[RMDB]
RNA sequence: GGGAACGACUCGAGUAGAGUCGAAAAGAAAGAAAGAACGAAGCCGGCUCUGCUAGUUUCACGGCAACCACGUUGAAAUUACAACGAAAGAAGCUCGCACUCAACUUCAACGGCUUAACGAGUGCAAAAAAGAAGUAUCACUUCGGUGAUACUUCAAGGGAGAAGUUAUGUUCGCAUAACUUCUCCCAAAAGAAACAACAACAACAAC
Reactivity to 2A3 in 0.01 (KOAc 150mM, MgCl2 10mM, bicine 150mM(pH8.5), 24C), signal-to-noise 2, nucleotides 027 to 156: g030a030a060a020g040a040a130a030g050a070a020c050g030a080a000g080c030c060g030g010c020u020c010u070g000c010u010a040g110u020u090u070c050a060c060g040g000c060a080a110c000c020a030c020g000u010u020g060a110a050a020u180u190a120c000a030a000c000g060a070a050a120g010a010a010g050c150u170c190g000c040a000c000u000c000a060a060c000u080u020c040a100a010c040g030g010c040u030u080a000a020c020g010a010g010u030g060c000a120a000a000a000a000a000g010a000a000g000u000a000u000c000a000c000u010u010c110g010g000u000g000a000u000a000c000u000u010c010a010a010